Chemical mapping of a 177-nucleotide RNA with DMS. Source: RMDB library OK2TRN, as collected in RNAgym.
RNA sequence: GGGAACGACUCGAGUAGAGUCGAAAAGCUGGUCUCAAACUCCUGACCUCAGGUGAUCCAAUUGCCUCGGCCCCCUAAUGUGCUGGGAUUACAGGCAUGAGCCAGUCACCACGCCCAGCUGGAAUUAAUUGCCAUAAAUCUUCGGAUUUAUGGCAAUAAAAGAAACAACAACAACAAC
Reactivity to DMS in 0.01 (KOAc 150mM, MgCl2 10mM, bicine 150mM(pH8.5), 24C), signal-to-noise 3, nucleotides 027 to 126: g040c030u000g000g010u000c020u010c050a050a120a170c090u000c010c000u000g040a120c120c140u000c040a020g030g000u010g000a070u000c100c090a070a110u000u010g010c010c000u000c090g010g030c010c000c010c050c030u000a050a030u000g020u000g000c030u000g020g000g010a070u010u000a090c130a060g010g000c090a050u010g000a090g010c030c040a040g010u010c060a110c050c050a070c160g010c030c000c010a070g010c030u000g000g000a170a110u020u000a060